[RMDB]
RNA sequence: GGGAACGACUCGAGUAGAGUCGAAAAGGCGGUGGGCUUCGGUGUGCGAGUUCUCGGGGAGCGAUCGGUGUACCGCCGAUCGGGGCGCCAUUCCUAAGUCUCAGUAAGGUUCCCUACGGGCUCCGGCCUAUGGUACCAGGUUCGCCUGGUACCAUAGAAAAGAAACAACAACAACAAC
Reactivity to DMS in 0.01 (KOAc 150mM, MgCl2 10mM, bicine 150mM(pH8.5), 24C), signal-to-noise 4, nucleotides 027 to 126: g000g010c070g010g030u000g000g020g000c080u000u010c090g000g010u010g020u010g010c080g000a090g010u010u000c040u010c060g010g010g000g010a140g030c030g010a010u000c010g000g000u000g020u020a110c220c120g010c000c010g000a010u000c010g010g000g000g020c060g020c050c030a090u000u010c010c020u000a080a080g010u000c030u000c030a090g010u000a070a100g000g010u000u000c010c010c000u010a120c140g000g000g010c030u000c070c050g010g000c110
Reactivity to 2A3 in 0.01 (KOAc 150mM, MgCl2 10mM, bicine 150mM(pH8.5), 24C), signal-to-noise 1, nucleotides 027 to 126: g050g000c050g010g020u080g020g000g020c030u100u080c080g000g000u070g030u060g090c040g000a060g040u120u070c070u060c030g000g010g000g000a020g080c010g000a000u000c000g050g000u050g050u170a200c090c100g000c000c000g000a000u020c010g000g010g020g000c030g010c030c010a040u080u040c000c010u070a150a080g040u000c020u020c050a040g060u120a130a040g010g000u030u040c010c000c000u000a040c060g000g020g000c030u040c040c040g030g000c020